[RMDB]
The record gives the reactivity of an RNA of 177 nucleotides to 2A3 and DMS. 2A3 adducts were read by reverse transcription with SuperScript II with manganese. Source: RMDB library OK2TST, as collected in RNAgym. The reactions ran in a buffer of 150 mM KOAc, 10 mM MgCl2 and 150 mM bicine (pH 8.5), at 24 C.
RNA sequence: GGGAACGACUCGAGUAGAGUCGAAAACUGAUGAGGAUGGGGAGCAUGGCCUUGGGCUCAAACAGCAGAAGGGUGAGUGUCACCUGAGCGGCCACCUCUCCUCUCCAAGGCUACAUGCGGAUCCAGCAUGCUCGAGUGAAUUCGUUCACUCGAGCAUAAAAGAAACAACAACAACAAC
Reactivity to 2A3 in 0.01 (KOAc 150mM, MgCl2 10mM, bicine 150mM(pH8.5), 24C), signal-to-noise 2, nucleotides 027 to 126: c010u030g030a040u120g060a080g140g010a060u080g000g000g000g000a040g000c030a040u010g000g000c020c020u050u020g070g030g000c010u040c030a190a220a100c100a030g090c040a010g070a240a000g060g030g020u070g020a140g070u170g110u060c000a020c050c040u050g030a010g010c080g020g000c020c000a010c000c000u000c010u010c000c000u000c010u000c000c000a010a010g070g000c030u110a050c100a030u030g010c040g000g060a040u030c040c020a030g030c040
Reactivity to DMS in 0.01 (KOAc 150mM, MgCl2 10mM, bicine 150mM(pH8.5), 24C), signal-to-noise 3, nucleotides 027 to 126: c030u020g020a110u010g010a110g000g000a100u010g030g000g010g010a190g000c200a090u010g000g000c010c000u000u010g010g010g000c050u020c140a090a060a110c240a110g020c050a100g020a110a140g010g000g010u010g020a110g000u010g010u000c120a050c010c020u000g010a080g000c180g010g010c040c090a030c240c020u000c030u000c000c020u000c030u000c030c030a050a040g000g000c050u000a070c040a020u010g010c030g010g000a270u000c000c020a090g010c060